[RMDB]
RNA sequence: GGGAACGACUCGAGUAGAGUCGAAAACUGCGCGAGAUCGAGCGGACCACACGCAAGAUCAAGAACGCGGCCAAGUCACGCGUGAUGAACAACGGUGUGCUGUUCGUGCCCGCCGAGAUGUCGCUACGCAAGCAUCUCUGUUCGCAGAGAUGCUUGCAAAAGAAACAACAACAACAAC
Reactivity to DMS in 0.01 (KOAc 150mM, MgCl2 10mM, bicine 150mM(pH8.5), 24C), signal-to-noise 1, nucleotides 027 to 126: c000u000g000c190g020c000g000a100g000a070u000c000g000a290g050c010g000g030a010c040c100a090c080a000c000g000c050a110a290g050a110u000c030a050a000g000a270a020c010g020c010g020g020c010c110a150a080g000u000c070a140c020g040c000g000u000g000a080u000g000a070a040c040a120a120c120g000g010u020g030u000g000c090u010g060u000u010c160g020u000g010c010c030c010g000c070c010g000a130g010a000u060g020u000c000g010c060u000a030c110
Reactivity to 2A3 in 0.01 (KOAc 150mM, MgCl2 10mM, bicine 150mM(pH8.5), 24C), signal-to-noise 2, nucleotides 027 to 126: c040u050g010c020g020c000g000a060g000a110u020c030g000a020g000c000g010g090a030c020c010a060c010a000c010g170c040a030a030g010a060u010c000a000a030g170a040a000c020g010c000g020g000c010c070a210a020g100u110c050a020c200g010c000g010u020g000a080u070g000a090a030c030a090a000c110g020g010u030g030u020g030c100u110g020u070u080c080g040u100g040c000c040c020g100c040c090g090a100g000a020u030g110u190c020g000c030u050a030c080